RNA sequence: GGGAACGACUCGAGUAGAGUCGAAAAUCUGCUCACUGCAGUCUCCACCUCCCAGGUUUAAGUAAUCCUCCUGCCUCAGCCUCCUGCAUAGCUGGGACUACAGGUGUGCGCCACCAUGCUGACUAAUUUUUGUAUUUUUAGUAGAGACGGGGCUUCAAUCGUGGUAAUAGUUCGCUAUUACCACGAUAAAAGAAACAACAACAACAAC
Reactivity to DMS in 0.01 (KOAc 150mM, MgCl2 10mM, bicine 150mM(pH8.5), 24C), signal-to-noise 1, nucleotides 027 to 156: u000c010u000g020c000u000c110a120c110u000g000c030a070g010u000c030u000c040c040a110c140c010u000c020c030c030a110g020g020u000u000u000a080a110g030u000a110a060u000c040c020u040c010c020u000g040c010c010u030c000a050g020c040c040u000c050c000u010g030c110a110u000a090g000c000u010g040g000g010a100c010u000a050c030a030g000g020u010g060u000g000c050g010c030c010a070c010c030a150u000g040c020u020g000a080c030u050a020a050u000u000u000u020u000g000u000a050u010u010u010u000u010a050g010u010a070g010a120g000a060c040g000g000g010g000c020u010u000c040a070
Description: This 207-nucleotide RNA was probed chemically with DMS. In probing experiments dimethyl sulfate is read out at A N1 and C N3, which are open when not base-paired. The RNA was probed in 150 mM KOAc, 10 mM MgCl2 and 150 mM bicine (pH 8.5) at 24 C. Source: RMDB library OK3TST, as collected in RNAgym. Values are in units of 0.01, from 0 to 300, in steps of 10. The DMS profile rests on 2,665 reads.